[RMDB]
RNA sequence: GGGAACGACUCGAGUAGAGUCGAAAACGUCAGAGGACGAAGUCGGUCCAUCUGCGGUAAAAGACCGACAUAGAGUUCGAAGCAGAACGAACAACCGCAGACACACGAUUGGAGUGUGAAUGAGAGACGGUAUCCACUCAUUCGUGAGUGGAUACCGAAAAGAAACAACAACAACAAC
Reactivity to DMS in 0.01 (KOAc 150mM, MgCl2 10mM, bicine 150mM(pH8.5), 24C), signal-to-noise 2, nucleotides 027 to 126: c020g000u000c040a190g110a120g000g070a000c000g000a190a130g030u000c000g040g010u000c000c080a120u000c000u000g000c070g010g030u030a040a000a100a180g000a020c030c000g000a030c050a200u080a130g130a070g000u030u000c000g000a070a040g020c210a150g020a000a030c000g000a120a110c140a140a140c030c000g000c000a000g000a220c080a000c000a030c050g030a200u000u030g000g070a130g000u000g020u020g010a060a000u050g020a030g000a190g000a300
Reactivity to 2A3 in 0.01 (KOAc 150mM, MgCl2 10mM, bicine 150mM(pH8.5), 24C), signal-to-noise 2, nucleotides 027 to 126: c030g040u020c060a020g000a100g300g050a040c010g060a070a010g000u000c000g030g000u000c010c050a050u060c000u000g000c050g000g040u060a100a020a000a080g000a000c000c000g020a000c020a010u180a000g150a000g000u020u020c020g020a130a060g150c090a010g090a050a020c020g000a010a000c050a050a050c000c000g000c000a000g010a010c020a020c000a000c000g140a090u150u300g160g000a300g090u020g000u010g010a070a110u300g040a090g010a000g010a060
Source: RMDB library OK1LIB, as collected in RNAgym.
The record gives the reactivity of an RNA of 177 nucleotides to DMS and 2A3.
Values cover nucleotides 27 to 126.
For 2A3, 1,489 sequencing reads were counted.
For DMS, 1,324 sequencing reads were counted.